[RMDB]
RNA sequence: GGGAACGACUCGAGUAGAGUCGAAAAAUCUCUUGCAGAAGCACAGCUGUAGUGAUGUUUGACAAGAGUCGGUAGGGGUCUGCCUCCUUACUGGGUGCACGGCAGUGUUCUAAACUCUCCGUGUGUCCUACCCUGUCGAUUUCGAUCGACAGGGUAGAAAAGAAACAACAACAACAAC
Reactivity to 2A3 in 0.01 (KOAc 150mM, MgCl2 10mM, bicine 150mM(pH8.5), 24C), signal-to-noise 3, nucleotides 027 to 126: a000u000c000u000c000u000u000g020c010a020g010a110a020g070c030a010c000a060g170c120u260g160u300a160g040u090g060a110u070g110u020u130u010g110a130c020a010a020g010a030g050u030c000g010g010u000a010g000g050g000g000u070c180u140g080c020c010u010c010c010u000u040a030c030u030g030g000g060u030g010c040a000c020g010g000c100a030g000u010g040u180u030c170u250a190a160a110c010u030c000u000c020c000g000u010g000u000g020u000c020
Reactivity to DMS in 0.01 (KOAc 150mM, MgCl2 10mM, bicine 150mM(pH8.5), 24C), signal-to-noise 3, nucleotides 027 to 126: a110u000c000u000c000u000u010g000c020a060g000a050a060g000c020a010c030a180g000c230u010g000u030a120g010u010g000a020u010g010u000u010u010g010a130c030a020a040g000a010g010u000c060g000g000u010a050g010g010g000g010u010c060u010g010c090c080u000c010c020u000u000a000c030u000g000g010g020u000g000c020a030c010g000g000c300a010g010u000g010u010u000c240u010a100a050a060c020u000c050u000c000c000g000u000g000u000g000u000c020